[RMDB]
RNA sequence: GGGAACGACUCGAGUAGAGUCGAAAAUCAAGUCAUCAUGGCCCUUACGCCUAGGGCGACACACGUGCUACAAUGGCAUAUACAAUGAGACGCAAUACCGCGAGGUGGAGCAAAUCUAUAAAAUAUGGACAUUCAGAAAGUUCGCUUUCUGAAUGUCAAAAGAAACAACAACAACAAC
Reactivity to 2A3 in 0.01 (KOAc 150mM, MgCl2 10mM, bicine 150mM(pH8.5), 24C), signal-to-noise 2, nucleotides 027 to 126: u080c030a040a070g060u030c020a040u010c000a030u210g150g040c000c010c060u010u090a070c100g110c000c020u030a020g060g000g000c040g050a010c040a000c000a000c100g090u080g000c020u080a100c120a070a200u110g020g000c030a010u060a010u010a080c060a010a150u100g000a000g010a020c090g000c010a010a010u020a070c010c000g000c020g010a070g000g010u020g050g000a000g000c000a000a020a040u040c020u010a130u060a240a240a020a020u200a040u090g080
Reactivity to DMS in 0.01 (KOAc 150mM, MgCl2 10mM, bicine 150mM(pH8.5), 24C), signal-to-noise 2, nucleotides 027 to 126: u010c110a110a160g050u000c010a060u000c060a090u010g020g000c000c040c020u000u010a050c100g000c040c080u000a060g010g010g010c000g000a150c150a110c090a080c100g000u000g040c080u000a030c120a120a050u030g010g020c020a020u000a050u030a150c210a090a000u000g050a040g000a120c240g000c000a000a300u000a020c060c000g010c210g000a080g020g000u000g000g020a300g000c040a020a050a030u000c030u010a100u010a080a060a020a100u000a110u000g000
Annotation:
The data come from the RNA Mapping Database (RMDB), library RFMREP. This 177-nucleotide RNA was probed chemically with 2A3 and DMS. Reactivities are given for positions 27 through 126. For 2A3, 1,344 sequencing reads were counted. 2A3 adducts were read by reverse transcription with SuperScript II with manganese. The DMS profile rests on 806 reads. The reactions ran in a buffer of 150 mM KOAc, 10 mM MgCl2 and 150 mM bicine (pH 8.5), at 24 C. In probing experiments dimethyl sulfate is read out at A N1 and C N3, which are open when not base-paired.